An RNA of 207 nucleotides, treated with 2A3 and read out base by base.
The reactions ran in a buffer of 150 mM KOAc, 10 mM MgCl2 and 150 mM bicine (pH 8.5), at 24 C.
The data come from the RNA Mapping Database (RMDB), library M2RFPK.
[RMDB]
RNA sequence: GGGAACGACUCGAGUAGAGUCGAAAACUGGAUCCGAAGCCUCUAGAAGGAUAAUAUAGGCACUCAAUACCCUACUCCGACUCAAUACGUCCCCGUCGUACAGAAUGGUAACAUAUCUCUCCAAAUAAAAACGUUGUCUCGUUCGCGAGACAACGAAGUAGAUUUAUGCGUUCGCGCAUAAAUCUACAAAAGAAACAACAACAACAAC
Reactivity to 2A3 in 0.01 (KOAc 150mM, MgCl2 10mM, bicine 150mM(pH8.5), 24C), signal-to-noise 2, nucleotides 027 to 156: c030u040g030g020a020u060c040c010g070a060a020g030c010c000u080c060u100a090g030a110a030g140g040a040u140a260a060u200a060u080a050g020g000c030a010c030u110c040a020a050u090a140c040c000c000u030a040c010u020c000c030g010a010c020u020c080a080a140u060a150c030g030u010c010c000c010c010g040u030c020g000u030a040c030a050g040a120a010u050g010g050u060a060a040c020a050u080a110u020c020u000c010u000c040c030a080a100a030u150a070a130a020a010a020c010g000u000u000g000u000c000u000c000g010u020u010c080g000c020g050a000g000a010c010a000a000c000g000a020a000